[RMDB]
RNA sequence: GGGAACGACUCGAGUAGAGUCGAAAACAGACUCUGAGUCAGUCUGACAGAGUGAGUGACUGACAGAGACAGAGACUGUCUGUGUCACUGUGUCAGACUCAGUCAGUGUCUCUCUGUGUCACACACAGCCAAAGUCGUACUUCGGUACGACUUUGGCAAAAGAAACAACAACAACAAC
Reactivity to 2A3 in 0.01 (KOAc 150mM, MgCl2 10mM, bicine 150mM(pH8.5), 24C), signal-to-noise 2, nucleotides 027 to 126: c040a010g010a000c000u000c020u080g030a050g250u100c020a000g020u000c020u040g000a000c030a020g160a000g050u050g010a060g020u090g100a050c010u080g020a010c000a000g020a000g120a050c080a080g120a020g110a100c000u010g000u000c010u030g020u020g020u010c020a020c080u200g040u050g060u190c030a030g000a030c000u030c010a000g060u000c000a000g020u000g070u040c000u010c010u020c030u030g000u010g030u080c040a040c000a020c000a010c010a080
Reactivity to DMS in 0.01 (KOAc 150mM, MgCl2 10mM, bicine 150mM(pH8.5), 24C), signal-to-noise 2, nucleotides 027 to 126: c190a010g000a020c010u010c010u020g000a050g000u000c300a000g010u000c010u000g000a080c030a040g000a080g030u000g020a020g020u010g010a050c050u020g010a040c000a010g010a050g000a120c180a090g010a140g020a070c010u000g000u000c010u000g010u000g000u000c010a020c040u000g010u000g020u000c040a080g000a020c000u000c020a070g000u000c050a010g010u000g000u010c000u000c050u000c010u010g010u000g000u010c130a060c090a300c040a010c020a060
Chemical mapping of a 177-nucleotide RNA with 2A3 and DMS. High DMS reactivity at an A or C suggests that its Watson-Crick edge is free. DMS adducts were read by reverse transcription with MarathonRT. For DMS, 1,424 sequencing reads were counted. 2A3 adducts were read by reverse transcription with SuperScript II with manganese.